Background:
Structure probing data (DMS and 2A3) for a 177-nucleotide construct. DMS (dimethyl sulfate) methylates the pairing face of unpaired adenines and cytosines. 2A3 adducts were read by reverse transcription with SuperScript II with manganese. The reactions ran in a buffer of 150 mM KOAc, 10 mM MgCl2 and 150 mM bicine (pH 8.5), at 24 C. Values cover nucleotides 27 to 126. The 2A3 profile rests on 9,045 reads. DMS adducts were read by reverse transcription with MarathonRT.
RNA sequence: GGGAACGACUCGAGUAGAGUCGAAAAGAUAUGGAACGCGAAAGGCGAUGAGUCCGGGUCGGAAACGACCUAGGACGAGCCUAGCGUUCCUAAGUCAAAACACCAUAGGGGUUCGCCCCUAUGGUGACCAUCUAACCACGUUCGCGUGGUUAGAUGGAAAAGAAACAACAACAACAAC
Reactivity to DMS in 0.01 (KOAc 150mM, MgCl2 10mM, bicine 150mM(pH8.5), 24C), signal-to-noise 3, nucleotides 027 to 126: g010a000u020a010u020g000g000a000a000c000g010c000g010a120a190a080g020g030c020g030a160u020g010a200g000u000c000c000g010g000g020u000c000g040g010a010a010a010c010g020a000c000c000u010a050g030g000a010c000g000a010g000c010c000u000a300g000c010g000u000u000c000c000u000a000a060g000u000c000a100a100a130a260c050a020c010c000a020u010a010g010g010g020g030u000u010c300g020c000c000c000c000u010a010u010g010g010u000g000a030
Reactivity to 2A3 in 0.01 (KOAc 150mM, MgCl2 10mM, bicine 150mM(pH8.5), 24C), signal-to-noise 3, nucleotides 027 to 126: g010a010u000a010u050g000g000a010a020c010g020c040g170a300a200a090g040g000c100g220a300u230g020a040g000u000c000c000g000g030g010u000c010g000g000a030a000a000c000g010a000c020c020u020a290g010g000a000c010g000a000g000c000c000u010a000g000c010g000u000u030c000c000u000a000a010g000u010c000a020a050a050a160c010a000c010c000a000u010a000g030g030g010g020u080u090c290g200c000c000c000c000u010a000u000g000g000u010g020a000